[RMDB]
RNA sequence: GGGAACGACUCGAGUAGAGUCGAAAAGAUAUGGAGAGAGCGAAGAACAUACAUAGUGUACAUCGGAAACGAUGUACCGAGUGUAUGGGAGCUCUACUCCUAAGUCAAAGCGGACUUCGGUCCGCAACUGUUACCCCUGGUUCGCCAGGGGUAACAGAAAAGAAACAACAACAACAAC
Reactivity to DMS in 0.01 (KOAc 150mM, MgCl2 10mM, bicine 150mM(pH8.5), 24C), signal-to-noise 1, nucleotides 027 to 126: g000a060u000a300u000g000g000a000g010a020g000a000g030c010g030a120a090g000a090a120c020a000u000a000c000a010u000a090g040u010g040u000a020c010a000u040c010g000g000a090a060a200c010g010a020u010g000u000a000c000c010g000a130g040u000g000u000a000u000g110g000g000a140g000c010u000c000u000a020c000u000c000c000u000a040a070g000u000c040a060a100a200g040c010g040g000a000c020u000u000c220g010g010u020c000c000g040c010a010a030
Reactivity to 2A3 in 0.01 (KOAc 150mM, MgCl2 10mM, bicine 150mM(pH8.5), 24C), signal-to-noise 2, nucleotides 027 to 126: g010a000u070a000u140g020g010a010g010a000g010a000g000c010g130a300a060g040a080a020c000a000u050a010c000a010u030a030g180u200g010u300a010c010a000u000c000g020g000a040a110a000c010g020a010u000g000u000a000c040c000g030a080g070u010g000u020a020u000g000g050g000a010g020c000u000c000u110a300c000u020c000c000u000a150a020g070u010c040a200a080a020g010c020g010g000a020c040u010u110c300g080g000u030c000c000g000c000a000a000
Background:
Structure probing data (DMS and 2A3) for a 177-nucleotide construct. High 2A3 reactivity points to a flexible backbone, as in loops and unpaired stretches. The data come from the RNA Mapping Database (RMDB), library TTRDEL. DMS (dimethyl sulfate) methylates the pairing face of unpaired adenines and cytosines. The RNA was probed in 150 mM KOAc, 10 mM MgCl2 and 150 mM bicine (pH 8.5) at 24 C.